[RMDB]
RNA sequence: GGGAACGACUCGAGUAGAGUCGAAAACUGAUCGCCAAGAUAACGAUAAACGCCGUACACCUAAUGGCAGAGCACAAGAAACAAUUAAUGUCAAUCUGCGCGCAUAAGCAGAACUUGUGACUAAUUGCAUCCCAGAUACGUUCGCGUAUCUGGGAUGAAAAGAAACAACAACAACAAC
Reactivity to DMS in 0.01 (KOAc 150mM, MgCl2 10mM, bicine 150mM(pH8.5), 24C), signal-to-noise 1, nucleotides 027 to 126: c100u000g000a070u010c110g000c000c010a090a020g010a100u010a050a020c010g000a050u000a050a100a160c080g010c060c000g000u040a000c140a090c120c020u000a160a040u010g000g030c050a110g010a060g010c060a000c100a020a070g000a110a100a120c040a000a020u000u000a040a100u020g000u000c060a100a190u000c000u010g000c000g010c210g040c220a040u000a050a140g030c000a000g010a020a210c130u000u000g000u000g000a010c030u010a030a070u000u030g000
Reactivity to 2A3 in 0.01 (KOAc 150mM, MgCl2 10mM, bicine 150mM(pH8.5), 24C), signal-to-noise 2, nucleotides 027 to 126: c020u070g020a040u040c010g010c040c000a090a090g050a140u140a150a040c040g000a010u050a130a200a020c070g010c010c010g010u050a000c060a030c100c010u050a130a010u110g000g000c030a010g070a010g010c010a010c000a060a030g000a070a140a010c050a040a040u120u230a090a090u130g010u040c000a010a060u000c010u000g010c000g000c050g040c080a070u060a280a120g000c000a000g030a010a060c030u050u070g060u030g100a120c020u060a070a050u030u140g020